[RMDB]
RNA sequence: GGGAACGACUCGAGUAGAGUCGAAAACAGGUUUUGGGACAGGCAGUGCCGGUACGAGCACAUUUGGUCAAGCAGGGACAGGCACAACUGGUUUCGGCGGCUUCGGUCAAACGCAACCGCAACAACAACAGCAACAGCAACAACCUGCGACGAGCGGAUUCCUGACUGAGUUCGCUCAGUCAGGAAUAAAAGAAACAACAACAACAAC
Reactivity to 2A3 in 0.01 (KOAc 150mM, MgCl2 10mM, bicine 150mM(pH8.5), 24C), signal-to-noise 2, nucleotides 027 to 156: c020a000g060g030u030u120u080u060g040g000g080a070c090a090g050g000c020a020g010u000g010c000c020g060g020u090a060c070g030a020g080c050a020c020a090u080u090u110g040g020u070c080a080a030g010c000a020g040g030g010a030c020a030g000g050c030a030c000a070a060c040u050g050g000u040u050u060c010g030g010c000g000g000c030u060u040c040g030g010u100c050a050a120a010c020g030c050a020a040c010c020g020c000a000a020c010a000a000c020a030a010c010a000g070c040a050a040c020a080g080c010a010a040c030a020a030c100c020u010g010c030g030a050c050g000a030g000c000g010g000
Reactivity to DMS in 0.01 (KOAc 150mM, MgCl2 10mM, bicine 150mM(pH8.5), 24C), signal-to-noise 1, nucleotides 027 to 156: c040a090g050g040u000u030u010u040g000g020g010a060c020a060g020g000c020a090g030u010g050c050c030g060g030u000a010c110g000a140g070c070a050c030a150u010u000u010g020g000u000c050a060a110g030c050a070g010g020g040a050c040a060g020g010c040a070c100a070a050c030u000g070g000u000u000u000c080g000g000c000g040g010c010u000u000c060g020g000u010c220a060a170a180c030g020c010a050a010c020c000g000c000a060a130c080a050a060c000a060a040c040a300g020c030a020a110c090a050g020c010a000a060c070a040a070c020c010u000g020c050g000a050c040g000a070g040c040g000g000

This 207-nucleotide RNA was probed chemically with 2A3 and DMS. The data come from the RNA Mapping Database (RMDB), library OK3TST. The reactions ran in a buffer of 150 mM KOAc, 10 mM MgCl2 and 150 mM bicine (pH 8.5), at 24 C. 2A3 adducts were read by reverse transcription with SuperScript II with manganese. Values cover nucleotides 27 to 156.